[RMDB]
RNA sequence: GGGAACGACUCGAGUAGAGUCGAAAACGAAUGCUCGUACAUCGGAUUGCACUCAUGAAAAUGAGUGUAACAUAUUAUACGAGCAUAGAUAUGCAUGGAUCCGAUGUACAAAAUUCAUGCGUAUUAAGGUAGACCUUGAUUUCGAUCAGGGUCUACCAAAAGAAACAACAACAACAAC
Reactivity to 2A3 in 0.01 (KOAc 150mM, MgCl2 10mM, bicine 150mM(pH8.5), 24C), signal-to-noise 9, nucleotides 027 to 126: c040g040a070a020u030g000c000u010c010g010u010a010c010a090u060c060g090g050a150u010u010g000c000a000c000u000c000a010u030g090a050a040a030a030u010g000a000g000u000g000u000a000a000c000a000u200a040u110u170a050u010a020c010g000a000g000c000a000u000a000g000a000u010a000u010g000c010a000u010g020g010a010u020c060c090g120a080u160g120u190a110c100a050a120a000a000u010u020c000a000u010g000c000g000u010a020u040u100a140a040
Reactivity to DMS in 0.01 (KOAc 150mM, MgCl2 10mM, bicine 150mM(pH8.5), 24C), signal-to-noise 7, nucleotides 027 to 126: c060g010a120a040u000g000c020u000c000g020u000a020c150a030u000c180g010g010a220u000u000g010c000a000c010u000c000a000u000g000a100a050a130a010u000g000a020g000u000g010u000a010a020c100a080u040a050u020u020a130u000a010c000g010a020g000c010a020u000a030g010a010u000a000u000g000c000a010u000g000g000a010u000c080c270g000a130u040g020u040a130c190a070a040a080a010u000u000c000a010u000g000c000g010u000a000u000u010a090a100